[RMDB]
RNA sequence: GGGAACGACUCGAGUAGAGUCGAAAAGGAACUAUGUUCAUGCAUGAAGCCUCCACGUGCUUGUUUCAACGUUCGGAAACGAAUGAGCAUAGUUAAGAGCUGAAGGAGGCACGGCUCAAAAUAAAAAGCUUCAACAACUGUUCGCAGUUGUUGGAGCAAAAGAAACAACAACAACAAC
Reactivity to 2A3 in 0.01 (KOAc 150mM, MgCl2 10mM, bicine 150mM(pH8.5), 24C), signal-to-noise 9, nucleotides 027 to 126: g130g020a000a000c000u000a000u000g000u000u000c000a000u010g010c000a000u010g040a080a010g000c000c000u010c000c000a010c000g000u000g000c030u110u150g030u000u010u000c040a080a060c100g140u140u120c110g150g020a010a000a000c020g060a180a010u010g000a000g000c000a000u000a000g000u000u010a060a020g000a000g000c000u010g020a130a030g030g000a000g000g000c020a010c000g000g000c000u000c000a040a050a010a000u190a010a050a010a010a000
Reactivity to DMS in 0.01 (KOAc 150mM, MgCl2 10mM, bicine 150mM(pH8.5), 24C), signal-to-noise 6, nucleotides 027 to 126: g010g010a020a010c010u000a010u010g010u000u010c000a000u010g010c010a030u000g010a070a120g020c000c010u000c010c020a300c000g010u000g010c000u040u030g000u000u000u010c030a090a150c230g000u030u040c180g010g000a020a020a010c010g030a280a010u000g000a000g000c010a000u000a000g010u000u010a040a060g020a010g010c010u010g000a080a100g010g010a010g000g000c000a300c040g000g000c000u000c000a150a060a080a050u060a040a080a080a100a060